[RMDB]
RNA sequence: GGGAACGACUCGAGUAGAGUCGAAAAAAUGGACGGACUUUCCCGAUGGAUCGUUUCGUAUAAUUUUGGUGCAAAAUAGUAGAGAGACGCAGUGUUACUCUUCCUUACGUUACCUGUAUCUGGAGAGCUACUAACGUAAAUUCGUUUACGUUAGUAGAAAAGAAACAACAACAACAAC
Reactivity to 2A3 in 0.01 (KOAc 150mM, MgCl2 10mM, bicine 150mM(pH8.5), 24C), signal-to-noise 9, nucleotides 027 to 126: a000a020u090g010g010a000c010g010g000a020c000u020u010u000c010c000c010g030a130u130g040g030a060u040c040g010u010u040u030c060g020u070a070u040a150a150u050u060u060u090g120g010u110g050c030a020a020a070a120u070a090g070u060a020g030a000g000a000g000a070c020g000c090a050g030u040g040u170u060a040c010u010c000u080u080c010c000u030u040a030c030g050u030u050a060c010c030u050g020u040a040u040c030u040g020g030a060g010a000g050
Reactivity to DMS in 0.01 (KOAc 150mM, MgCl2 10mM, bicine 150mM(pH8.5), 24C), signal-to-noise 9, nucleotides 027 to 126: a050a030u010g000g010a050c040g010g000a060c030u000u000u000c010c000c190g010a140u020g010g010a050u000c050g000u000u000u000c030g010u010a060u020a050a050u000u000u000u000g010g020u010g020c070a040a050a060a050u000a100g010u000a080g010a130g010a170g010a050c060g020c110a070g000u010g010u010u000a100c040u000c040u000u000c030c070u010u000a050c070g000u010u010a080c120c090u010g010u000a030u010c080u010g000g000a070g010a070g010
Chemical mapping of a 177-nucleotide RNA with 2A3 and DMS. For 2A3 the reverse transcriptase was SuperScript II with manganese. High 2A3 reactivity points to a flexible backbone, as in loops and unpaired stretches. DMS adducts were read by reverse transcription with MarathonRT.